[RMDB]
RNA sequence: GGGAACGACUCGAGUAGAGUCGAAAAGAUAUGGACUAUUCGGCUAGUUCCAUUCGGAAACGAAUGAAGAACUUGGACCCGACUAGUCCUAAGUCAAAACCUAGCUUGGGUUCGCCCAAGCUAGGAAGUGUAAAUAGAACUUCGGUUCUAUUUACACAAAAGAAACAACAACAACAAC
Reactivity to DMS in 0.01 (KOAc 150mM, MgCl2 10mM, bicine 150mM(pH8.5), 24C), signal-to-noise 6, nucleotides 027 to 126: g000a010u000a170u010g000g000a030c000u000a020u000u000c020g020g030c070u010a040g010u010u000c000c000a010u010u000c000g020g000a060a050a090c000g000a010a000u000g010a240a170g010a010a010c000u000u000g030g010a120c300c000c010g000a020c140u000a020g010u000c000c000u000a000a060g010u010c020a120a090a150a230c010c010u000a000g000c000u000u000g010g000g010u010u020c270g020c000c010c010a000a000g000c000u000a000g000g020a000a040
Reactivity to 2A3 in 0.01 (KOAc 150mM, MgCl2 10mM, bicine 150mM(pH8.5), 24C), signal-to-noise 5, nucleotides 027 to 126: g010a010u030a010u090g000g000a000c000u000a010u010u010c020g000g050c200u200a030g010u010u000c000c000a000u000u010c010g000g000a020a040a040c020g000a000a010u050g040a160a270g000a010a000c060u220u300g280g230a120c030c000c000g000a000c000u000a010g010u020c010c000u000a010a000g020u000c030a010a010a080a210c000c000u000a000g000c000u010u000g020g000g000u040u050c050g170c000c010c010a000a000g000c000u000a000g000g000a000a020